[RMDB]
RNA sequence: GGGAACGACUCGAGUAGAGUCGAAAAUUGGCUACGUUCGGGAGGGAUAACCGCUGAAAGCAUCUAAGCGGGAAGCCUGCUUCGAGAUGAGGACUCCCACCCACUUGAUGGGUUAAGGCUCCCAGUACCACUAUGCGAAAUUCGUUUCGCAUAGUGGAAAAGAAACAACAACAACAAC
Reactivity to DMS in 0.01 (KOAc 150mM, MgCl2 10mM, bicine 150mM(pH8.5), 24C), signal-to-noise 3, nucleotides 027 to 126: u010u010g020g020c060u000a090c120g020u000u000c060g000g010g010a200g030g010g010a050u000a100a200c020c010g010c070u000g010a080a100a160g020c100a050u000c040u000a210a030g010c030g010g020g000a060a100g000c020c010u000g000c050u010u000c040g010a090g000a130u010g010a090g010g020a150c130u000c020c000c020a160c020c010c020a050c040u000u010g010a070u000g000g000g000u000u000a060a070g010g010c100u010c010c000c010a180g010u000a200
Reactivity to 2A3 in 0.01 (KOAc 150mM, MgCl2 10mM, bicine 150mM(pH8.5), 24C), signal-to-noise 2, nucleotides 027 to 126: u060u050g060g030c020u040a030c080g080u060u120c050g030g030g000a020g000g000g020a020u050a070a080c010c010g010c020u020g080a100a070a000g140c030a050u040c030u110a030a040g010c010g000g000g020a020a010g030c020c000u020g000c020u090u080c020g160a210g060a130u170g050a080g030g020a050c030u020c000c020c000a020c010c010c000a020c000u090u220g040a160u060g140g010g000u010u110a040a020g040g000c000u020c000c000c000a000g040u040a080

This 177-nucleotide RNA was probed chemically with DMS and 2A3. The RNA was probed in 150 mM KOAc, 10 mM MgCl2 and 150 mM bicine (pH 8.5) at 24 C. Source: RMDB library OK2TRN, as collected in RNAgym.